[RMDB]
RNA sequence: GGGAACGACUCGAGUAGAGUCGAAAAAUAAGUACUAAAGACGGGUAUUGCGGGCUACCACUUGUAGCUACUGAAGAUGGAAAGAUCGUUGGAAUACAUAGUUUGUCAAAUGUGUCAAACACACAAACUCAGACCCAACUUUCGAGUUGGGUCUGAGAAAAGAAACAACAACAACAAC
Reactivity to 2A3 in 0.01 (KOAc 150mM, MgCl2 10mM, bicine 150mM(pH8.5), 24C), signal-to-noise 1, nucleotides 027 to 126: a000u150a170a000g130u040a000c000u030a060a060a000g060a040c220g000g180g000u140a070u000u020g070c040g010g000g080c000u030a070c000c080a080c030u060u170g000u000a000g100c030u070a130c000u040g000a000a000g050a130u060g000g030a000a170a000g010a030u110c070g000u140u040g010g070a100a130u130a130c100a010u080a000g020u040u150u110g250u240c000a160a100a150u200g040u000g000u000c000a020a110a020c060a000c010a040c000a060a000a000